Background: Source: RMDB library OK3TST, as collected in RNAgym. The record gives the reactivity of an RNA of 207 nucleotides to 2A3. Values cover nucleotides 27 to 156. The RNA was probed in 150 mM KOAc, 10 mM MgCl2 and 150 mM bicine (pH 8.5) at 24 C.
RNA sequence: GGGAACGACUCGAGUAGAGUCGAAAACGUCGUCAAUCGGAAAGAUCAGACCAUUCCACAUGCGGUGCUGAGGGCGCACGCGGGCGUCACCAGCUGUUCGGUAUUGAAGGAAUGGCCGCUUUGCCUUGCCCGCCUGCAGCUGUUGCCAGCGACCUGCCUCCCCUAUGCGUUUCGACGCAUAGGGGAGAAAAGAAACAACAACAACAAC
Reactivity to 2A3 in 0.01 (KOAc 150mM, MgCl2 10mM, bicine 150mM(pH8.5), 24C), signal-to-noise 1, nucleotides 027 to 156: c020g030u010c030g100u070c020a070a080u050c100g140g040a250a170a010g050a100u130c030a070g050a060c000c000a030u000u080c010c020a060c010a070u130g040c010g060g000u050g000c000u030g000a060g020g030g060c020g060c000a080c090g030c060g030g070g000c000g000u020c030a050c080c000a020g000c030u020g150u130u080c020g100g130u100a120u060u150g180a210a130g140g020a000a070u050g030g000c020c000g070c000u170u040u130g050c030c020u010u150g020c000c000c000g000c000c000u000g000c000a160g000c010u080g010u300u130g100c090c010a070g000c000g030a040c000c010u090g030c010